The data come from the RNA Mapping Database (RMDB), library OK2TST. The record gives the reactivity of an RNA of 177 nucleotides to DMS. The RNA was probed in 150 mM KOAc, 10 mM MgCl2 and 150 mM bicine (pH 8.5) at 24 C. Values cover nucleotides 27 to 126.
[RMDB]
RNA sequence: GGGAACGACUCGAGUAGAGUCGAAAAACACUGCCUACACUAUUCUGAGUACUGUGAUGUUUUUGCUGUGUCAUUUAAGAAUAUUCAAUUCUGCCACAGAAAUUGAGAGAAACUAAGUAUGGGAGCAAACCGUGAACCUUUUCGAAGGUUCACGGUUAAAAGAAACAACAACAACAAC
Reactivity to DMS in 0.01 (KOAc 150mM, MgCl2 10mM, bicine 150mM(pH8.5), 24C), signal-to-noise 1, nucleotides 027 to 126: a070c060a150c110u020g000c030c010u000a170c100a070c000u000a060u000u020c050u000g000a130g030u010a060c050u000g020u030g000a090u010g010u000u000u000u000u000g000c010u010g020u000g040u010c060a080u010u000u010a140a040g000a050a060u000a160u000u000c120a060a050u000u000c030u000g010c150c050a030c040a040g000a070a050a050u010u000g010a120g000a140g010a050a070a090c040u010a020a010g010u000a070u000g000g010g000a090g020c060a040